RNA sequence: GGGAACGACUCGAGUAGAGUCGAAAACUCACUCUAAAGGAUCGCGUAACCGAUGAUUAUGGAUGGAGUUUCAAGUUCACUGGAACGGAGACACGUUGCUUAAAUCUGGGAUCCUACAAUUACCUGGCGUGCUGAGCUGAUUCGUCAGCUCAGCACGAAAAGAAACAACAACAACAAC
Reactivity to 2A3 in 0.01 (KOAc 150mM, MgCl2 10mM, bicine 150mM(pH8.5), 24C), signal-to-noise 2, nucleotides 027 to 126: c000u000c010a110c020u240c050u180a170a150a000g040g000a010u010c020g010c070g280u120a100a020c040c020g010a060u130g020a060u020u120a030u080g100g000a000u000g030g020a240g040u010u040u020c090a140a080g000u010u040c060a090c300u230g160g000a010a010c010g000g000a000g000a020c000a000c040g000u020u090g120c010u030u120a070a030a040u000c000u000g010g060g000a000u000c000c060u020a030c110a070a180u120u080a080c020c020u040g170g000
Reactivity to DMS in 0.01 (KOAc 150mM, MgCl2 10mM, bicine 150mM(pH8.5), 24C), signal-to-noise 1, nucleotides 027 to 126: c020u020c040a090c160u010c120u010a130a100a130g020g020a020u000c010g000c100g020u010a090a230c210c030g000a060u010g010a050u000u000a020u030g000g000a030u020g030g000a110g020u010u000u020c040a080a160g010u000u010c010a200c110u010g010g000a000a020c050g000g000a060g000a010c030a100c080g000u010u010g010c010u000u000a030a010a050u030c030u000g010g000g000a040u020c000c010u010a040c240a090a050u010u010a090c060c090u030g000g020
Record summary: This 177-nucleotide RNA was probed chemically with 2A3 and DMS. The reactions ran in a buffer of 150 mM KOAc, 10 mM MgCl2 and 150 mM bicine (pH 8.5), at 24 C. In probing experiments dimethyl sulfate is read out at A N1 and C N3, which are open when not base-paired.